Conditions: 150 mM KOAc, 10 mM MgCl2 and 150 mM bicine (pH 8.5), 24 C. Structure probing data (2A3 and DMS) for a 177-nucleotide construct. 2A3 adducts were read by reverse transcription with SuperScript II with manganese.

[RMDB]
RNA sequence: GGGAACGACUCGAGUAGAGUCGAAAAUACAGAAAGGGAAUGUGACGUCGUCAAUACAGCAACACAAUUUGAAUUUGGGCCUUACACAUUUCAGGUCUCAGAUGUGGGAAAUGUGCAACACAAGUUACUACACGUCUUGAUUCGUCAAGACGUGUAGAAAAGAAACAACAACAACAAC
Reactivity to 2A3 in 0.01 (KOAc 150mM, MgCl2 10mM, bicine 150mM(pH8.5), 24C), signal-to-noise 6, nucleotides 027 to 126: u170a000c090a020g170a100a080a040g050g000g020a050a080u060g050u090g080a040c060g030u040c020g000u070c080a020a060u110a150c030a030g080c020a070a060c040a040c040a130a120u080u010u140g050a090a070u070u060u070g050g000g000c000c000u060u110a040c050a010c000a060u050u130u130c040a030g040g060u010c000u000c050a050g050a150u120g050u070g050g050g030a030a070a050u070g050u040g020c010a000a140c050a020c030a150a040g050u080u060a030
Reactivity to DMS in 0.01 (KOAc 150mM, MgCl2 10mM, bicine 150mM(pH8.5), 24C), signal-to-noise 4, nucleotides 027 to 126: u030a080c150a100g020a040a090a050g000g000g010a040a050u020g040u010g000a090c080g010u000c030g000u020c080a050a060u010a110c120a090g010c060a070a050c060a040c150a050a120u050u030u030g000a090a060u010u010u010g020g010g020c020c020u000u030a160c070a040c100a100u020u020u020c050a010g000g020u020c040u000c090a040g000a050u010g000u000g010g000g020a030a060a010u000g010u010g020c100a050a060c080a060c110a060a090g000u040u010a140